[RMDB]
An RNA of 177 nucleotides, treated with DMS and read out base by base. The reactions ran in a buffer of 150 mM KOAc, 10 mM MgCl2 and 150 mM bicine (pH 8.5), at 24 C. Values are in units of 0.01, from 0 to 300, in steps of 10. Source: RMDB library M2PK90, as collected in RNAgym. For DMS the reverse transcriptase was MarathonRT.

RNA sequence: GGGAACGACUCGAGUAGAGUCGAAAAUACAAGAAGGGGGGACGGAGAAGGCUAUGUUGGCCGGGCGACGGUUGUCCCGGUUUAAGCGUGUAGGCUGGUUUUCCAGGCAAAUCCGGAAGAUAAUGAAUAACCUAGGUAUCUUCGGAUACCUAGGUUAAAAAGAAACAACAACAACAAC
Reactivity to DMS in 0.01 (KOAc 150mM, MgCl2 10mM, bicine 150mM(pH8.5), 24C), signal-to-noise 2, nucleotides 027 to 126: u000a070c050a040a140g010a120a080g030g030g020g000g020g000a080c050g000g000a050g000a090a120g010g000c050u010a020u010g020u010u000g010g000c010c020g010g000g030c300g010a080c140g020g010u010u010g000u010c010c000c010g020g010u000u000u000a070a100g000c040g030u010g000u000a050g020g000c020u000g020g010u000u000u000u000c010c040a120g010g000c070a040a060a080u000c010c010g000g020a070a080g010a050u000a060a030u000g000a070a140